Chemical mapping of a 177-nucleotide RNA with 2A3 and DMS. For DMS the reverse transcriptase was MarathonRT. For 2A3, 1,580 sequencing reads were counted. Reactivities are given for positions 27 through 126. The RNA was probed in 150 mM KOAc, 10 mM MgCl2 and 150 mM bicine (pH 8.5) at 24 C. The DMS profile rests on 2,931 reads. Reactivities are rounded to 0.1 and cut off at 0 and 3.

[RMDB]
RNA sequence: GGGAACGACUCGAGUAGAGUCGAAAAGAAGCCUGAGCCCCAGAGCAUCCCGGGAGCGCCGCGGGCCGGUGCUCGGCUCGUUGGGCCAUGCAGCGGCGGCCGCCGCGGAGCUGCGAGCGGCGGUAGCCGGACCAGUGCAGUUCGCUGCACUGGUCCGAAAAGAAACAACAACAACAAC
Reactivity to 2A3 in 0.01 (KOAc 150mM, MgCl2 10mM, bicine 150mM(pH8.5), 24C), signal-to-noise 2, nucleotides 027 to 126: g080a070a010g060c020c010u020g010a020g010c020c020c010c040a030g010a000g020c010a060u090c000c030c000g020g090g000a050g000c020g010c000c000g020c030g010g100g040c030c020g010g010u060g010c080u070c040g020g010c010u010c010g050u050u140g000g040g000c000c000a020u070g010c040a030g060c000g030g010c000g030g000c000c000g010c000c000g020c030g010g040a080g030c020u080g030c020g020a020g020c010g000g000c000g020g000u030a010g020c000
Reactivity to DMS in 0.01 (KOAc 150mM, MgCl2 10mM, bicine 150mM(pH8.5), 24C), signal-to-noise 2, nucleotides 027 to 126: g010a120a110g020c030c000u010g030a140g020c010c010c030c150a130g000a070g000c030a120u010c020c000c030g040g010g040a020g020c020g020c000c000g000c020g010g000g000c070c000g010g000u020g000c030u010c050g000g010c000u010c010g010u000u020g020g000g000c040c050a040u010g020c130a110g010c050g010g040c000g000g010c010c000g040c020c030g000c020g000g010a150g030c050u010g000c050g050a150g010c010g000g010c000g000g000u000a110g030c050